[RMDB]
RNA sequence: GGGAACGACUCGAGUAGAGUCGAAAACCAAUGGGAAACCAUUGGCAACUCGGAAACGAGUUGAACUCGGAAUUACCUAUUAAACGAGCGACAAUGCGAUUUUAAGCAUUGUCGAUUACGCCCAUGUCGAUUUUAAGACAUGGAGCGAAAAUAGGAAGGAACGAUGUCCGUUCGCGGACGUUGUUCCAAAAGAAACAACAACAACAAC
Reactivity to 2A3 in 0.01 (KOAc 150mM, MgCl2 10mM, bicine 150mM(pH8.5), 24C), signal-to-noise 1, nucleotides 027 to 156: c000c000a000a000u010g000g000g010a070a020a000c000c000a010u000u000g000g000c000a000a000c000u010c030g010g040a070a080a060c000g000a010g000u000u000g000a060a040c010u000c010g010g010a060a020u030u010a030c000c000u010a000u000u000a030a040a000c000g000a000g010c000g000a000c000a000a000u000g030c030g140a170u030u100u070u300a100a020g000c000a000u010u000g000u000c010g000a000u000u000a040c010g000c000c000c010a000u000g010u000c050g060a160u050u080u100u300a200a080g000a000c000a000u010g000g000a120g000c000g000a260a000a060a010u020a000g030g000a030a300